[RMDB]
RNA sequence: GGGAACGACUCGAGUAGAGUCGAAAAGCCGGACCAGCCUUGUGGCGUGGGCGGGUGCAAGACCUGUCAGAAUGGUUUCGUGGCUGACAUUGCUGAAGGUAAGGCACGCAAGACCAGGUACGUGGACCCAUUCACGGAAGUUCGCUUCCGUGAAUGGAAAAGAAACAACAACAACAAC
Reactivity to DMS in 0.01 (KOAc 150mM, MgCl2 10mM, bicine 150mM(pH8.5), 24C), signal-to-noise 3, nucleotides 027 to 126: g010c000c000g000g000a070c040c020a150g020c020c010u010u000g020u010g010g020c040g010u000g000g010g000c030g000g000g010u000g010c070a070a110g020a030c010c000u010g010u010c040a020g010a080a060u000g010g000u000u010u000c080g020u000g010g020c040u000g000a090c030a060u010u000g000c020u040g000a300a020g000g010u010a050a080g020g010c000a060c040g010c050a080a100g000a100c040c020a080g000g010u000a050c080g030u000g010g000a180c140
Reactivity to 2A3 in 0.01 (KOAc 150mM, MgCl2 10mM, bicine 150mM(pH8.5), 24C), signal-to-noise 2, nucleotides 027 to 126: g000c010c060g030g100a160c000c010a010g090c020c010u250u230g090u280g140g000c090g100u080g030g000g000c050g000g030g040u070g000c000a060a000g020a100c030c030u010g160u180c000a000g030a030a060u090g070g000u040u050u100c100g020u080g090g000c050u040g000a030c000a010u020u220g030c030u020g040a030a050g060g000u050a030a030g050g010c040a010c020g010c090a110a020g040a050c010c020a010g070g000u050a050c080g030u030g040g000a030c020